[RMDB]
RNA sequence: GGGAACGACUCGAGUAGAGUCGAAAAAGGACGUCCUCCCUGUCUCCUCGGUUCUUCUUCGAUCCGGACCGGCUCAUCUCGGCAAGGGGCGGCAGUCCUCAGUGCUCUUACUCUUUCCUAUAAAGAGAUCGUGGCAAGUUCGCUUGCCACAAAAGAAACAACAACAACAAC
Reactivity to 2A3 in 0.01 (KOAc 150mM, MgCl2 10mM, bicine 150mM(pH8.5), 24C), signal-to-noise 5, nucleotides 027 to 129: a000g000g000a010c010g070u080c010c010u020c000c000c000u010g030u010c040u050c040c020u050c010g020g010u060u010c010u150u010c030u110u120c130g110a110u030c030c050g000g020a010c000c010g010g010c030u040c050a140u020c070u040c050g010g000c050a060a120g030g000g010g000c030g000g000c020a070g020u010c000c000u010c030a050g010u060g070c000u000c000u060u070a040c000u000c000u040u020u040c020c030u090a080u140a120a110a000g050a000g010a030u110c090
Reactivity to DMS in 0.01 (KOAc 150mM, MgCl2 10mM, bicine 150mM(pH8.5), 24C), signal-to-noise 4, nucleotides 027 to 129: a000g040g020a070c050g020u020c000c000u040c000c030c010u000g030u030c040u000c080c040u020c050g020g030u010u050c020u100u020c050u080u040c120g000a150u030c100c080g060g000a100c110c060g000g000c060u010c110a130u010c100u010c050g000g060c000a070a050g020g000g010g080c050g010g050c070a000g050u010c010c000u020c060a100g030u050g000c020u020c040u020u020a080c020u010c130u050u010u050c040c060u000a000u070a010a000a000g020a020g000a120u090c090
Chemical mapping of a 170-nucleotide RNA with 2A3 and DMS. The RNA was probed in 150 mM KOAc, 10 mM MgCl2 and 150 mM bicine (pH 8.5) at 24 C. 2A3 adducts were read by reverse transcription with SuperScript II with manganese.